The data come from the RNA Mapping Database (RMDB), library OK2TST. This 177-nucleotide RNA was probed chemically with 2A3 and DMS. High 2A3 reactivity points to a flexible backbone, as in loops and unpaired stretches. Values cover nucleotides 27 to 126. The DMS profile rests on 5,035 reads. The RNA was probed in 150 mM KOAc, 10 mM MgCl2 and 150 mM bicine (pH 8.5) at 24 C.
RNA sequence: GGGAACGACUCGAGUAGAGUCGAAAAUGGCCUGGCAAAAUGCUGAGAUUACAGGCAUGAAUCACUGUGGCUGACCAUUAGUGGGUUCUAAUCACAUACUUUAUAUCAGUCAGUGUCCUGGCAGGAAUACAAAUCUCAGUUUCGACUGAGAUUUGUAAAAAGAAACAACAACAACAAC
Reactivity to 2A3 in 0.01 (KOAc 150mM, MgCl2 10mM, bicine 150mM(pH8.5), 24C), signal-to-noise 3, nucleotides 027 to 126: u080g130g030c010c010u000g060g060c060a080a030a010a080u110g010c040u050g030a060g020a190u090u190a050c050a060g020g000c000a030u080g040a020a050u060c030a000c030u020g000u050g100g000c090u090g100a160c010c030a070u090u100a040g030u060g030g060g010u050u050c060u130a040a030u090c030a030c010a100u130a050c030u100u130u030a130u010a020u110c020a030g080u020c010a020g040u020g030u060c000c010u030g010g000c010a000g000g090a050a020
Reactivity to DMS in 0.01 (KOAc 150mM, MgCl2 10mM, bicine 150mM(pH8.5), 24C), signal-to-noise 4, nucleotides 027 to 126: u010g010g010c010c000u000g010g000c120a050a070a080a090u010g010c030u000g000a100g010a090u000u000a120c140a090g000g000c060a060u010g000a080a070u010c020a010c060u000g010u000g000g010c150u010g010a060c110c070a070u010u010a040g030u000g010g010g000u000u000c070u020a070a090u010c120a090c100a090u000a040c050u000u000u000a060u010a110u010c030a040g010u000c040a040g020u000g000u000c030c030u000g010g000c040a060g000g010a110a160